Source: RMDB library OK2TRN, as collected in RNAgym. The record gives the reactivity of an RNA of 177 nucleotides to DMS and 2A3. For 2A3 the reverse transcriptase was SuperScript II with manganese. The reactions ran in a buffer of 150 mM KOAc, 10 mM MgCl2 and 150 mM bicine (pH 8.5), at 24 C. The 2A3 profile rests on 1,328 reads.

[RMDB]
RNA sequence: GGGAACGACUCGAGUAGAGUCGAAAAGAGGAUUCAACGAGCUUCGUAGCAACGAUAGCAACGUAGCUUUUGCUACGACCCCAGCUAUCGAGGGUAGCUACGUCCCAUGCUCGAGGGCAGAAUCCGACCAUAGCACGACCUUCGGGUCGUGCUAUGGAAAAGAAACAACAACAACAAC
Reactivity to DMS in 0.01 (KOAc 150mM, MgCl2 10mM, bicine 150mM(pH8.5), 24C), signal-to-noise 1, nucleotides 027 to 126: g000a230g040g040a020u000u000c040a170a140c010g000a010g000c030u020u000c030g040u000a000g050c020a070a110c040g010a000u000a000g010c020a080a130c010g000u000a000g000c000u000u000u000u000g040c000u000a010c000g030a080c150c130c060c080a220g010c000u000a000u000c010g010a150g030g000g020u060a110g000c000u000a030c030g000u010c210c080c090a140u010g000c020u010c000g020a100g000g000g020c190a160g010a030a000u000c000c010g000a150
Reactivity to 2A3 in 0.01 (KOAc 150mM, MgCl2 10mM, bicine 150mM(pH8.5), 24C), signal-to-noise 1, nucleotides 027 to 126: g180a040g010g000a010u010u020c000a050a010c010g000a000g030c020u110u050c000g010u050a010g000c000a060a050c000g010a000u000a000g000c010a010a110c030g000u030a000g000c000u130u220u280u300g050c010u000a000c020g260a280c000c020c010c050a000g000c040u000a000u000c010g060a110g100g190g110u100a040g000c010u010a010c000g060u100c030c040c020a010u070g000c010u000c010g050a110g000g100g000c080a060g020a020a010u000c000c000g000a020